Structure probing data (DMS and 2A3) for a 207-nucleotide construct. Source: RMDB library OK3TST, as collected in RNAgym. 2A3 adducts were read by reverse transcription with SuperScript II with manganese. The reactions ran in a buffer of 150 mM KOAc, 10 mM MgCl2 and 150 mM bicine (pH 8.5), at 24 C. Reactivities are given for positions 27 through 156.
RNA sequence: GGGAACGACUCGAGUAGAGUCGAAAACGUCCAGGAUGAUACGUCAUCCUGGACGAUAUAUACUAGGUUGGCAUUUUGAGCGCAUCUUACUCAAAUCCUAGUAUUUCCAUUAAUAUCUAAUGAUAUUAAUGAUGCCUCUUAAUAUAAGAGAUGCAAAGACGCAUUAUUUAUUCGUAAAUAAUGCGUCAAAAGAAACAACAACAACAAC
Reactivity to DMS in 0.01 (KOAc 150mM, MgCl2 10mM, bicine 150mM(pH8.5), 24C), signal-to-noise 1, nucleotides 027 to 156: c010g020u000c000c000a010g000g000a020u000g000a060u000a080c270g050u000c000a020u000c000c000u000g000g000a000c000g080a000u000a040u010a070u010a040c020u000a000g010g020u000u020g000g010c090a150u010u000u010u000g010a040g000c020g010c140a100u000c190u000u000a040c020u010c010a010a040a060u000c000c000u000a010g000u000a060u000u000u000c050c000a030u000u000a010a020u010a010u020c010u010a140a250u000g000a010u000a000u000u000a000a010u000g000a120u000g020c030c000u000c020u000u000a100a180u010a140u010a030a010g000a040g000a080u000g000c060a050a160a270
Reactivity to 2A3 in 0.01 (KOAc 150mM, MgCl2 10mM, bicine 150mM(pH8.5), 24C), signal-to-noise 6, nucleotides 027 to 156: c010g000u000c000c000a000g000g000a010u000g000a010u020a070c190g070u000c000a000u000c010c000u000g000g020a010c000g000a000u000a000u000a000u000a010c000u010a000g000g040u080u160g100g000c030a060u040u010u010u060g010a010g000c050g010c050a030u010c010u080u120a210c000u010c010a010a010a030u050c000c000u000a000g000u000a010u040u080u010c030c000a000u000u000a000a000u000a000u000c030u120a240a140u300g000a000u000a000u000u000a000a000u000g030a010u050g010c030c000u170c050u140u240a300a190u140a110u040a290a040g000a000g000a030u030g010c010a040a050a060